Chemical mapping of a 177-nucleotide RNA with DMS and 2A3. The RNA was probed in 150 mM KOAc, 10 mM MgCl2 and 150 mM bicine (pH 8.5) at 24 C.
RNA sequence: GGGAACGACUCGAGUAGAGUCGAAAAAGGCCAUCGACGCCGAAAUUCCGCUGUUGGUUGUGAUCACCGAGGGAAUUCCGGUGCAGGACACCGCCUAUGCCUGGGCCUACAACCUCGAGGCUGGCCACCUUUUCAUAUUUUUCGAAAUAUGAAAAGGAAAAGAAACAACAACAACAAC
Reactivity to DMS in 0.01 (KOAc 150mM, MgCl2 10mM, bicine 150mM(pH8.5), 24C), signal-to-noise 9, nucleotides 027 to 126: a070g020g010c010c010a180u000c030g010a080c030g010c000c000g010a010a020a030u000u000c000c010g010c080u010g010u010u010g020g010u000u000g030u000g010a120u010c140a030c010c010g010a060g010g010g000a040a020u000u000c030c000g000g020u000g010c010a080g000g010a120c050a040c040c060g010c020c010u000a300u000g000c010c000u000g010g000g000c020c020u010a090c270a110a230c020c010u000c020g000a030g010g020c030u000g010g010c010c050a230
Reactivity to 2A3 in 0.01 (KOAc 150mM, MgCl2 10mM, bicine 150mM(pH8.5), 24C), signal-to-noise 8, nucleotides 027 to 126: a010g010g000c010c000a040u030c040g050a050c020g000c010c000g000a020a000a000u020u000c020c030g150c300u110g160u240u190g040g010u020u040g070u100g130a080u230c050a010c020c010g020a030g020g000g020a020a020u050u000c020c010g020g000u020g000c020a020g000g040a060c010a020c020c040g020c010c010u040a040u070g010c000c000u000g010g000g000c000c020u120a080c060a040a050c020c000u040c050g150a300g040g000c060u070g030g010c010c000a040